An RNA of 207 nucleotides, treated with 2A3 and DMS and read out base by base. Reactivities are rounded to 0.1 and cut off at 0 and 3. For DMS the reverse transcriptase was MarathonRT. For 2A3, 16,848 sequencing reads were counted.
[RMDB]
RNA sequence: GGGAACGACUCGAGUAGAGUCGAAAAUAGCGAAGUAGGAUUUUAUGCGUCAAGUGUUCGCAGGCUGGGGAGUCGCCGUGAAACGAAAAGCAGAAAGCGUGCUGCUUACGAUAUAAUUUCCGCACCCAUAAGAAGUCUCUGUUCGCAGAGACUUCAAACAUAUUAACAUCUUCGGAUGUUAAUAUGUAAAAGAAACAACAACAACAAC
Reactivity to 2A3 in 0.01 (KOAc 150mM, MgCl2 10mM, bicine 150mM(pH8.5), 24C), signal-to-noise 9, nucleotides 027 to 156: u150a020g050c040g050a090a010g050u080a070g030g040a020u030u030u020u050a050u090g030c020g010u030c090a060a050g020u040g030u160u050c040g000c040a040g040g000c020u070g010g020g000g030a040g060u070c020g010c020c010g050u070g040a060a030a030c040g030a040a050a040a040g020c030a020g080a090a120a010g080c080g070u070g030c010u010g000c010u020u020a010c010g020a010u010a000u020a110a040u020u020u010c000c000g000c030a050c000c010c000a040u070a110a080g000a000a000g000u000c000u000c000u000g050u040u060c170g010c070a000g000a000g000a000c000u000u000c000a000a000
Reactivity to DMS in 0.01 (KOAc 150mM, MgCl2 10mM, bicine 150mM(pH8.5), 24C), signal-to-noise 4, nucleotides 027 to 156: u000a070g020c060g020a080a120g030u000a120g020g000a080u000u000u000u000a040u000g020c020g000u000c070a040a140g010u000g000u000u000c050g020c000a080g000g010c040u000g030g010g020g010a090g030u000c020g020c020c030g010u000g010a070a070a130c060g000a210a060a060a080g010c030a060g010a080a050a110g010c110g020u000g000c010u000g010c010u000u000a050c060g020a110u000a040u000a050a070u000u000u000c010c010g010c050a130c010c000c020a170u010a080a150g010a030a010g010u000c000u000c000u000g020u000u000c300g020c020a020g010a010g010a010c000u000u000c000a010a070

DMS (dimethyl sulfate) methylates the pairing face of unpaired adenines and cytosines.